[RMDB]
RNA sequence: GGGAACGACUCGAGUAGAGUCGAAAAUUGGACCUUCGGGUCCAACUGAUGGGGUCGACAAUUCGGUGAUGACCGACAUGUCCUGAAGCCUCCACGGGACAACAGCGCAAGCCGUUAUGUCGACGGAGGCACCCGACUAAGGGCCUUCGGGCCCUAACGCUAAACUUCUGUUCGCAGAAGUUUAGCGAAAAGAAACAACAACAACAAC
Reactivity to 2A3 in 0.01 (KOAc 150mM, MgCl2 10mM, bicine 150mM(pH8.5), 24C), signal-to-noise 1, nucleotides 027 to 156: u010u020g000g010a030c010c000u010u070c300g170g000g020u010c010c000a000a010c010u040g050a110u270g010g030g010g040u000c010g000a000c000a150a190u100u050c030g080g030u000g040a300u210g090a110c050c030g020a060c070a090u080g000u000c020c000u020g070a060a040g010c010c000u000c000c000a030c000g010g000g060a020c010a030a030c080a060g170c020g010c150a210a180g010c010c030g090u140u020a080u190g010u000c000g030a000c010g000g000a000g000g000c000a030c000c000c010g000a020c030u100a010a100g030g020g000c000c030u080u060c150g040g000g000c000c000c000u000a040a000